[RMDB]
RNA sequence: GGGAACGACUCGAGUAGAGUCGAAAAUUCCAAUUCCAUUUGCCGAAAUGUGAACAAUAGGGCAGAGUGCUCUUGUGCGCCAGGAAUGUUUGGAGCACCACCGAACUGUCGACCUGAAUGUGUGAUAACUCCACCUAGUGUUCGCACUAGGUGGAGUAAAAGAAACAACAACAACAAC
Reactivity to DMS in 0.01 (KOAc 150mM, MgCl2 10mM, bicine 150mM(pH8.5), 24C), signal-to-noise 1, nucleotides 027 to 126: u020u000c020c040a120a170u000u010c030c030a100u000u000u000g050c020c050g000a050a040a050u010g040u020g010a040a070c150a080a050u010a110g030g050g000c020a020g000a110g030u000g020c030u000c020u000u000g020u000g000c010g000c020c040a050g000g030a060a090u000g010u000u000u040g030g010a030g000c030a010c020c040a070c060c020g010a070a040c040u000g040u000c080g020a060c030c020u000g010a050a110u000g000u000g030u000g000a080u000a050